Record summary:
Chemical mapping of a 170-nucleotide RNA with 2A3 and DMS. For DMS the reverse transcriptase was MarathonRT. For 2A3, 4,732 sequencing reads were counted. The data come from the RNA Mapping Database (RMDB), library 15KLIB. Conditions: 150 mM KOAc, 10 mM MgCl2 and 150 mM bicine (pH 8.5), 24 C. The DMS profile rests on 9,805 reads.

[RMDB]
RNA sequence: GGGAACGACUCGAGUAGAGUCGAAAAGAGUCCUCUAGACCGCAAGGAGGAAAUUACCAGCAGGGGGUGAUCCACCCGGAGAUGAGCGGACAAGCCACAUCCAGAGGACCCCUUCAGCGAACAGAAGAGACUGGCCUGUUCGCAGGCCAGAAAAGAAACAACAACAACAAC
Reactivity to 2A3 in 0.01 (KOAc 150mM, MgCl2 10mM, bicine 150mM(pH8.5), 24C), signal-to-noise 3, nucleotides 027 to 129: g030a030g100u050c010c000u010c010u040a080g060a170c000c050g060c110a110a040g030g000a030g000g070a000a010a070u130u120a080c030c020a000g060c020a010g080g000g000g010g000u010g030a090u050c010c010a020c030c060c000g050g030a050g020a080u130g010a050g000c000g100g030a050c060a020a010g020c010c020a090c010a080u000c010c000a000g010a020g070g000a050c000c000c000c000u070u040c030a010g000c000g060a020a020c020a050g030a130a000g070a030g010a040
Reactivity to DMS in 0.01 (KOAc 150mM, MgCl2 10mM, bicine 150mM(pH8.5), 24C), signal-to-noise 6, nucleotides 027 to 129: g020a210g020u030c060c000u020c010u030a100g000a180c090c140g020c170a070a090g000g000a060g010g010a010a060a070u010u020a110c070c020a100g040c110a140g060g000g040g000g060u040g030a110u040c050c050a100c080c040c030g060g010a030g080a000u040g000a300g000c060g000g010a180c230a130a110g060c040c030a120c080a110u030c070c020a160g010a090g000g010a000c110c010c000c060u060u010c170a060g030c020g020a020a020c000a030g000a050a020g020a040g020a200